This 177-nucleotide RNA was probed chemically with DMS and 2A3.
2A3 adducts were read by reverse transcription with SuperScript II with manganese.
The DMS profile rests on 9,208 reads.
The reactions ran in a buffer of 150 mM KOAc, 10 mM MgCl2 and 150 mM bicine (pH 8.5), at 24 C.

[RMDB]
RNA sequence: GGGAACGACUCGAGUAGAGUCGAAAAGAUAUGGACAACAAGCAACAGCGGACCAUCGGAAACGAUGGUUCCGACAUGCUUCUAGUCCUAAGUCAAAGAGCCCAAACAGUUCGCUGUUUGGGCUCAACUAAACAUAUAACUUCGGUUAUAUGUUUAGAAAAGAAACAACAACAACAAC
Reactivity to DMS in 0.01 (KOAc 150mM, MgCl2 10mM, bicine 150mM(pH8.5), 24C), signal-to-noise 5, nucleotides 027 to 126: g000a010u000a120u010g000g000a010c000a050a190c300a020a010g010c000a070a140c300a120g000c010g010g000a040c000c000a000u000c010g000g000a040a030a040c010g000a010u000g000g000u000u000c000c000g000a070c150a070u010g020c010u000u000c030u000a300g000u000c000c000u000a010a100g010u000c010a080a140a100g000a020g010c000c010c000a000a000a000c000a010g010u000u010c220g010c000u000g000u000u000u000g010g010g000c000u010c000a010a050
Reactivity to 2A3 in 0.01 (KOAc 150mM, MgCl2 10mM, bicine 150mM(pH8.5), 24C), signal-to-noise 3, nucleotides 027 to 126: g000a000u020a020u040g000g000a000c010a060a010c000a050a000g010c020a050a240c090a300g110c030g010g000a000c000c000a010u000c000g000g030a010a010a010c000g010a000u010g010g000u040u030c010c000g000a030c030a070u060g000c010u000u000c000u030a010g000u010c000c000u000a020a000g000u010c010a000a140a220g020a000g010c000c000c000a000a000a000c050a030g090u190u200c240g010c230u000g000u000u000u000g000g000g000c020u000c000a000a000